[RMDB]
RNA sequence: GGGAACGACUCGAGUAGAGUCGAAAAAGGUGUGUCGGUGUGGUAUGGGAGAGUGAUGGUCCGGGAGUAAAGGGUGAGGGUGUUGAUCGUAAGUGGAUCUGGAGGCAAUUUCUUUCACAGUAAACAAUCAACUGGACGUGUUCGCGCGUUCGGUUGAAAAAGAAACAACAACAACAAC
Reactivity to 2A3 in 0.01 (KOAc 150mM, MgCl2 10mM, bicine 150mM(pH8.5), 24C), signal-to-noise 7, nucleotides 027 to 126: a000g030g000u020g000u000g010u020c020g000g020u030g000u020g020g010u040a050u050g020g010g010a030g000a000g010u070g030a040u050g000g010u020c010c010g000g010g010a020g010u100a030a050a010g030g000g000u030g040a050g000g010g010u020g020u020u090g010a030u020c010g010u040a070a010g040u050g080g000a050u010c020u030g010g010a020g030g000c010a020a050u030u020u020c000u010u070u050c050a030c010a020g030u100a040a060a020c040a020a130
Reactivity to DMS in 0.01 (KOAc 150mM, MgCl2 10mM, bicine 150mM(pH8.5), 24C), signal-to-noise 9, nucleotides 027 to 126: a060g000g010u020g010u010g010u010c070g010g010u010g020u010g010g000u000a060u010g010g010g000a080g000a080g010u010g000a090u020g010g010u010c060c050g000g000g000a080g010u020a050a080a090g010g000g000u010g010a080g000g000g010u000g010u010u000g010a050u000c070g010u000a050a080g010u010g010g000a040u010c030u000g010g000a090g000g010c090a050a060u010u010u010c020u000u010u010c070a050c140a090g010u030a040a060a070c200a050a120